Structure probing data (DMS and 2A3) for a 177-nucleotide construct. Values cover nucleotides 27 to 126. For 2A3 the reverse transcriptase was SuperScript II with manganese.
RNA sequence: GGGAACGACUCGAGUAGAGUCGAAAACGUCCAGGGCGUCCUUGGCGUGCCGUGGCUGGAAGACGCCCACCCCGCUGCGGCUCACAGUGUCCCGGGCGAAAACUCGGUGAUCAACAAGAGGGGCGCGUCGUCAUAGGGCUUUCGAGCCCUAUGACGAAAAAGAAACAACAACAACAAC
Reactivity to DMS in 0.01 (KOAc 150mM, MgCl2 10mM, bicine 150mM(pH8.5), 24C), signal-to-noise 1, nucleotides 027 to 126: c060g030u050c000c030a170g020g000g000c040g000u010c030c100u030u000g000g040c110g000u040g000c000c000g060u000g000g010c000u010g010g000a070a110g000a140c170g030c000c000c110a130c070c010c000c110g040c000u000g000c010g000g000c090u010c060a040c060a040g000u010g040u000c000c000c070g060g000g000c090g010a080a110a080a300c000u020c030g000g060u070g000a060u010c080a130a070c170a060a290g000a140g000g010g020g010c000g000c060g000
Reactivity to 2A3 in 0.01 (KOAc 150mM, MgCl2 10mM, bicine 150mM(pH8.5), 24C), signal-to-noise 3, nucleotides 027 to 126: c040g070u110c010c000a030g000g020g060c010g050u110c030c000u010u010g030g020c020g000u000g000c000c000g010u000g050g000c030u040g000g100a150a070g100a050c030g050c000c000c000a070c000c000c000c000g020c030u010g020c000g000g040c010u030c050a110c080a130g050u060g030u090c010c010c010g010g000g010c090g070a080a050a000a000c010u000c000g020g060u290g050a090u100c080a050a130c010a070a060g060a060g130g010g020g000c020g000c010g010
Overview: For 2A3, 1,578 sequencing reads were counted. The RNA was probed in 150 mM KOAc, 10 mM MgCl2 and 150 mM bicine (pH 8.5) at 24 C.